[RMDB]
RNA sequence: GGGAACGACUCGAGUAGAGUCGAAAAGAUAUGGAUCGUGUGACUGUAGAUUCUCUCGGAAACGAGAGGGAGAUCGCAGAUAGUCCACGAUCCUAAGUCAAAAUCACGCAGGUUCGCCUGCGUGAAAGUGUAUGGGCAAGUUCGCUUGCCCAUACACAAAAGAAACAACAACAACAAC
Reactivity to 2A3 in 0.01 (KOAc 150mM, MgCl2 10mM, bicine 150mM(pH8.5), 24C), signal-to-noise 2, nucleotides 027 to 126: g010a000u010a000u060g020g010a000u000c010g010u010g220u300g040a020c000u130g120u300a040g020a030u300u010c000u000c000u000c030g020g050a000a020a010c010g010a020g000a020g000g030g030a300g020a030u040c010g020c080a060g150a300u210a010g000u000c000c000a000c000g000a000u010c000c010u010a000a000g000u000c020a020a040a000a300u040c000a000c000g000c010a000g040g020u050u160c210g140c100c000u010g000c000g020u000g000a020a000a000
Reactivity to DMS in 0.01 (KOAc 150mM, MgCl2 10mM, bicine 150mM(pH8.5), 24C), signal-to-noise 2, nucleotides 027 to 126: g000a020u000a080u050g000g000a000u000c000g030u030g010u040g010a030c000u000g010u010a060g020a020u000u000c000u000c010u000c010g010g010a010a020a030c010g030a020g000a030g010g010g010a280g000a010u000c000g000c300a170g000a180u000a050g010u000c000c000a010c000g000a010u000c000c000u000a000a080g000u000c000a080a060a100a150u010c000a000c000g000c020a000g000g000u000u040c300g010c010c000u000g010c000g020u000g010a000a000a090
Chemical mapping of a 177-nucleotide RNA with 2A3 and DMS. Source: RMDB library TTRDES, as collected in RNAgym. 2A3 adducts were read by reverse transcription with SuperScript II with manganese. In probing experiments dimethyl sulfate is read out at A N1 and C N3, which are open when not base-paired. The DMS profile rests on 1,600 reads.